Structure probing data (2A3 and DMS) for a 177-nucleotide construct. The reactions ran in a buffer of 150 mM KOAc, 10 mM MgCl2 and 150 mM bicine (pH 8.5), at 24 C. DMS adducts were read by reverse transcription with MarathonRT. The data come from the RNA Mapping Database (RMDB), library OK2TRN. For DMS, 6,044 sequencing reads were counted. The 2A3 profile rests on 4,593 reads.

[RMDB]
RNA sequence: GGGAACGACUCGAGUAGAGUCGAAAAGCCGUUUGCCCGUCGCCAACGUCGUGGUGACCCCGGCCCACGAAGCCAUGGUGCGGGUGGGCACCAAGCCCGGUACCGAGGUGCCCCCGGUGAUCGACGGUAGAAUUCAUUGGUUCGCCAAUGAAUUCUAAAAAGAAACAACAACAACAAC
Reactivity to 2A3 in 0.01 (KOAc 150mM, MgCl2 10mM, bicine 150mM(pH8.5), 24C), signal-to-noise 3, nucleotides 027 to 126: g000c030c010g020u030u090u160g030c030c020c000g060u170c070g050c010c000a160a120c090g030u000c010g000u030g000g040u060g040a090c000c010c040c000g040g030c000c000c010a020c020g000a060a020g020c060c050a110u090g010g000u030g030c010g000g020g000u090g020g000g000c000a000c030c010a090a050g040c000c040c010g050g020u060a070c030c020g020a060g050g000u090g000c040c010c010c000c020g010g030u050g040a080u080c040g020a020c010g000g020
Reactivity to DMS in 0.01 (KOAc 150mM, MgCl2 10mM, bicine 150mM(pH8.5), 24C), signal-to-noise 4, nucleotides 027 to 126: g010c020c010g010u000u010u010g010c030c010c010g010u020c030g010c030c010a080a120c080g000u000c010g010u000g000g020u000g000a140c030c010c010c020g000g000c130c000c000a010c000g010a060a060g010c070c130a140u000g000g040u000g010c020g000g000g040u000g010g010g010c000a050c060c050a110a230g000c040c030c030g000g000u010a060c070c030g010a190g000g010u000g010c010c010c000c070c030g000g010u000g000a090u010c040g010a040c030g000g010